[RMDB]
RNA sequence: GGGAACGACUCGAGUAGAGUCGAAAAACCUCUAAGUUCGCUUAGAGGUAAUGAACGCUGCAAAAUGCAGCGCGCUCAGCGGAGCACGCAAAAGCAACGCAAGAACACCAUUCUUCGGAAUGGUGAACAAGGAUAACUAGUUCGCUAGUUAUCCUUGAAAAGAAACAACAACAACAAC
Reactivity to 2A3 in 0.01 (KOAc 150mM, MgCl2 10mM, bicine 150mM(pH8.5), 24C), signal-to-noise 8, nucleotides 027 to 126: a000c000c000u000c000u000a020a020g010u030u120c170g040c130u000u000a000g000a010g000g010u010a010a030u080g010a100a020c020g000c010u010g000c020a150a180a130a300u250g000c010a010g000c000g010c020g020c000u050c040a030g020c020g060g010a030g020c030a020c090g130c060a060a090a010a050g010c010a020a020c020g010c030a040a040g070a120a010c010a000c010c000a000u000u000c010u020u050c170g060g000a000a000u000g000g000u000g010a020a010
Reactivity to DMS in 0.01 (KOAc 150mM, MgCl2 10mM, bicine 150mM(pH8.5), 24C), signal-to-noise 8, nucleotides 027 to 126: a040c000c010u000c000u000a000a010g010u000u010c230g030c000u000u000a000g010a010g010g010u000a010a020u010g010a090a090c020g010c000u000g010c010a110a070a090a150u000g010c030a020g010c000g010c080g000c040u010c040a120g020c060g010g000a280g010c020a050c110g020c140a070a040a170a070g010c020a030a160c030g010c050a110a110g000a110a180c010a010c000c000a010u000u000c000u000u010c180g030g000a010a010u000g000g010u000g000a030a060